Conditions: 150 mM KOAc, 10 mM MgCl2 and 150 mM bicine (pH 8.5), 24 C. This 177-nucleotide RNA was probed chemically with 2A3 and DMS. For 2A3, 1,288 sequencing reads were counted.
[RMDB]
RNA sequence: GGGAACGACUCGAGUAGAGUCGAAAACACCGGAGCCGAACCCAAGGUAGUUCGACUGAAUCAUGGACACCAUCAUUCCCGCAGCAUCGGCGGCGGCCAGAUAGACGGUGCCGCCUCGCGGGAUGCCGCUAUGGCGUCUGUUCGCAGACGCCAUAGCAAAAGAAACAACAACAACAAC
Reactivity to 2A3 in 0.01 (KOAc 150mM, MgCl2 10mM, bicine 150mM(pH8.5), 24C), signal-to-noise 1, nucleotides 027 to 126: c090a080c020c000g000g070a000g020c030c010g010a000a050c050c000c000a040a040g120g030u050a080g010u050u050c020g080a050c080u080g010a060a100u040c040a070u160g040g010a000c040a020c090c010a050u110c020a040u160u120c000c020c020g030c020a040g030c020a060u160c050g040g000c020g000g020c020g100g070c000c000a080g050a250u230a080g090a060c050g040g050u040g010c000c000g050c000c000u000c000g010c000g000g000g050a020u000g040c030c100
Reactivity to DMS in 0.01 (KOAc 150mM, MgCl2 10mM, bicine 150mM(pH8.5), 24C), signal-to-noise 2, nucleotides 027 to 126: c110a130c030c060g000g020a090g000c020c000g000a060a230c020c030c000a150a090g000g020u000a050g000u000u010c010g020a060c090u000g030a110a110u000c060a050u010g000g000a050c030a090c040c030a120u010c100a220u000u000c000c010c010g020c100a090g030c220a110u000c180g010g000c040g000g020c000g010g010c010c030a070g040a230u000a160g030a200c190g000g000u000g000c000c010g000c010c000u000c020g010c020g020g000g010a000u000g000c210c090
DMS adducts were read by reverse transcription with MarathonRT.
2A3 adducts were read by reverse transcription with SuperScript II with manganese.
Reactivities are rounded to 0.1 and cut off at 0 and 3.